[RMDB]
RNA sequence: GGGAACGACUCGAGUAGAGUCGAAAAGCCAUGGGAGAUGGAAAGAUUGGCAACAGCGGGUACAAAAAGAUGUACGAAAUAAGCAAAUAAGCUGUCAUUCGUUAGACCUAGAUUACUUAAAAAUAAGAGGUAGUACUAUGUUCGCAUAGUACUACCUAAAAGAAACAACAACAACAAC
Reactivity to 2A3 in 0.01 (KOAc 150mM, MgCl2 10mM, bicine 150mM(pH8.5), 24C), signal-to-noise 3, nucleotides 027 to 126: g000c010c020a020u040g040g000g000a140g020a040u070g010g040a100a030a000g080a090u090u090g030g000c020a050a010c000a090g010c040g070g070g030u000a020c060a040a120a020a040a080g130a130u130g000u050a010c000g030a000a120a150u220a080a040g000c030a020a050a160u150a200a030g030c010u010g000u050c030a060u040u020c000g020u020u060a040g030a060c000c000u060a090g010a220u080u160a090c080u090u170a100a100a040a170a140u170a120a090g050
Reactivity to DMS in 0.01 (KOAc 150mM, MgCl2 10mM, bicine 150mM(pH8.5), 24C), signal-to-noise 3, nucleotides 027 to 126: g010c030c020a060u010g000g020g010a150g030a060u010g000g000a050a070a110g020a070u010u000g030g000c040a030a060c090a040g010c060g000g030g020u000a040c070a030a070a100a110a090g010a110u010g020u010a040c010g020a030a080a050u000a110a100g000c050a070a070a110u010a100a110g020c010u000g010u000c140a050u000u000c020g010u000u000a070g020a180c020c040u010a090g000a110u000u000a040c090u030u020a020a040a050a100a070u010a090a080g010